[RMDB]
RNA sequence: GGGAACGACUCGAGUAGAGUCGAAAAUAUAGAGAGGGGUUAUGAUAGAUACCUUGCAUAUUCUUUGAAUAUCCUCAAGAUUUUCCAACAGAUCCUUAUAUCCCUUAACUUCACUAUUAACACAACAUAUAGUAUACCAAUUCGUUGGUAUACUAUAAAAAGAAACAACAACAACAAC
Reactivity to 2A3 in 0.01 (KOAc 150mM, MgCl2 10mM, bicine 150mM(pH8.5), 24C), signal-to-noise 2, nucleotides 027 to 126: u150a010u040a020g070a000g040a010g110g020g000g020u070u060a060u090g050a060u050a090g040a010u050a050c010c000u010u050g030c010a020u010a030u090u060c040u070u080u070g000a020a010u020a020u030c010c000u040c020a020a030g010a110u120u100u060u070c020c000a010a000c000a050g050a060u040c000c000u040u000a050u000a040u090c000c000c000u030u050a070a040c030u080u070c050a020c060u100a100u200u130a150a020c030a000c010a050a200c030a020
Reactivity to DMS in 0.01 (KOAc 150mM, MgCl2 10mM, bicine 150mM(pH8.5), 24C), signal-to-noise 5, nucleotides 027 to 126: u010a050u000a060g000a150g010a090g000g010g010g010u000u000a040u000g010a190u000a080g000a040u000a040c070c030u000u000g020c300a040u000a020u000u000c010u000u000u000g010a070a030u000a030u000c110c080u010c030a060a080g000a080u010u000u000u000c020c050a050a120c060a070g010a030u000c010c020u010u000a110u010a110u000c010c010c010u000u000a060a080c100u000u010c060a060c080u010a050u000u010a050a070c070a060c110a030a060c130a120